[RMDB]
RNA sequence: GGGAACGACUCGAGUAGAGUCGAAAAGAUAUGGAUCUACGCAGCGCAUGUACAUCGGAAACGAUGUACCUCUGAACUACGCUGGUAGAUCCUAAGUCAAAGCUAGGCUGCUUCGGCAGCCUAGCAACAGUCUCUAACUGUUCGCAGUUAGAGACUGAAAAGAAACAACAACAACAAC
Reactivity to 2A3 in 0.01 (KOAc 150mM, MgCl2 10mM, bicine 150mM(pH8.5), 24C), signal-to-noise 2, nucleotides 027 to 126: g020a010u050a030u080g010g000a000u020c020u020a010c100g030c300a010g000c120g030c160a020u100g000u000a000c010a000u010c000g010g010a040a000a020c000g010a010u000g000u000a000c000c010u080c020u030g050a120a070c130u240a060c240g000c020u000g000g000u010a010g000a000u020c010c000u000a010a000g000u020c030a000a110a110g020c000u000a010g020g000c010u010g000c010u100u140c280g090g000c000a000g020c000c010u000a000g000c000a000a000
Reactivity to DMS in 0.01 (KOAc 150mM, MgCl2 10mM, bicine 150mM(pH8.5), 24C), signal-to-noise 2, nucleotides 027 to 126: g010a030u000a300u020g010g010a000u000c000u000a000c010g000c000a000g030c020g000c020a030u000g010u000a000c020a000u000c010g010g000a100a110a080c020g000a010u000g020u000a010c000c060u000c080u010g000a150a120c190u000a300c050g010c000u000g000g010u010a010g000a010u010c000c010u000a020a050g000u000c090a070a160a140g000c000u000a000g000g000c000u010g000c000u000u010c180g020g020c000a010g010c010c000u000a010g000c000a020a040
Source: RMDB library TTRDEL, as collected in RNAgym. An RNA of 177 nucleotides, treated with 2A3 and DMS and read out base by base. DMS (dimethyl sulfate) methylates the pairing face of unpaired adenines and cytosines. Conditions: 150 mM KOAc, 10 mM MgCl2 and 150 mM bicine (pH 8.5), 24 C.